RNA sequence: GGGAACGACUCGAGUAGAGUCGAAAACUCACUACGUGGCGUAGAUUCUCCUUUAUUUACUAAACGAUCGAUUGCACGCCAUCUAAUAACAUCAUCAGGAGAAAUAAAAGACAACGCAUGUCCAGUACGGUACGCUUUUAUUCGUAAAAGCGUACCGAAAAGAAACAACAACAACAAC
Reactivity to 2A3 in 0.01 (KOAc 150mM, MgCl2 10mM, bicine 150mM(pH8.5), 24C), signal-to-noise 2, nucleotides 027 to 126: c020u000c010a060c060u120a080c070g020u040g040g040c020g020u030a060g020a150u070u030c030u040c000c000u040u230u050a130u050u160u090a110c110u170a100a090a030c020g040a040u120c010g030a050u030u080g050c060a010c040g000c020c000a020u030c010u030a070a100u080a100a060c090a090u110c010a000u060c010a030g030g020a010g010a030a080a000u120a020a110a010a000g030a020c030a030a010c050g000c040a020u080g060u030c000c000a020g100u050a020
Reactivity to DMS in 0.01 (KOAc 150mM, MgCl2 10mM, bicine 150mM(pH8.5), 24C), signal-to-noise 2, nucleotides 027 to 126: c030u000c050a190c120u000a130c260g070u000g010g040c070g040u020a100g010a150u000u000c020u000c020c040u000u000u000a070u000u000u000a050c100u000a070a060a070c210g010a070u010c200g000a130u000u000g000c100a110c010g000c000c020a050u000c130u000a100a100u000a100a050c150a060u000c050a060u010c150a050g010g010a070g000a010a070a080u010a090a030a070a100g010a110c050a040a030c030g000c070a090u010g030u000c040c090a080g010u010a160
An RNA of 177 nucleotides, treated with 2A3 and DMS and read out base by base. Conditions: 150 mM KOAc, 10 mM MgCl2 and 150 mM bicine (pH 8.5), 24 C. The data come from the RNA Mapping Database (RMDB), library OK2TST. For DMS the reverse transcriptase was MarathonRT.